[RMDB]
RNA sequence: GGGAACGACUCGAGUAGAGUCGAAAAUAACGGUAUCCUGGAACUCCUAAAACAUGUUACUACAAGACAAGUCUUGAUAACAAUAUAACUUUUAGCUAAGAAUAACUAACAGCAACAUCAAAAAGAGCUAGUUGAAGGUAUUCGUACCUUCAACUAGAAAAGAAACAACAACAACAAC
Reactivity to DMS in 0.01 (KOAc 150mM, MgCl2 10mM, bicine 150mM(pH8.5), 24C), signal-to-noise 4, nucleotides 027 to 126: u020a100a070c090g020g020u010a020u020c000c010u010g000g020a140a090c070u010c050c020u010a060a050a070a140c240a130u000g000u000u010a040c130u020a150c020a010a020g010a070c090a060a150g000u020c000u000u000g000a220u020a030a010c040a040a100u030a070u020a090a100c040u000u020u000u040a030g010c050u010a030a080g010a100a060u000a050a130c080u020a020a040c080a020g020c050a030a070c120a040u020c150a010a070a070a090a090g000a110g020
Reactivity to 2A3 in 0.01 (KOAc 150mM, MgCl2 10mM, bicine 150mM(pH8.5), 24C), signal-to-noise 8, nucleotides 027 to 126: u090a020a010c030g020g010u040a040u050c000c000u010g030g030a060a050c020u020c020c020u070a080a070a050a030c050a060u040g010u040u030a030c060u050a060c020a030a000g030a020c030a150a080g110u030c000u010u040g020a030u020a060a000c020a110a020u120a010u060a240a110c030u040u040u050u120a010g010c020u040a070a050g060a190a150u140a120a050c050u060a040a050c030a020g060c030a010a090c020a100u130c080a030a070a070a030a000g080a010g090
Structure probing data (DMS and 2A3) for a 177-nucleotide construct. The reactions ran in a buffer of 150 mM KOAc, 10 mM MgCl2 and 150 mM bicine (pH 8.5), at 24 C. Reactivities are given for positions 27 through 126. DMS (dimethyl sulfate) methylates the pairing face of unpaired adenines and cytosines. It was measured as part of the RMDB libraries RFM100 and RFMREP.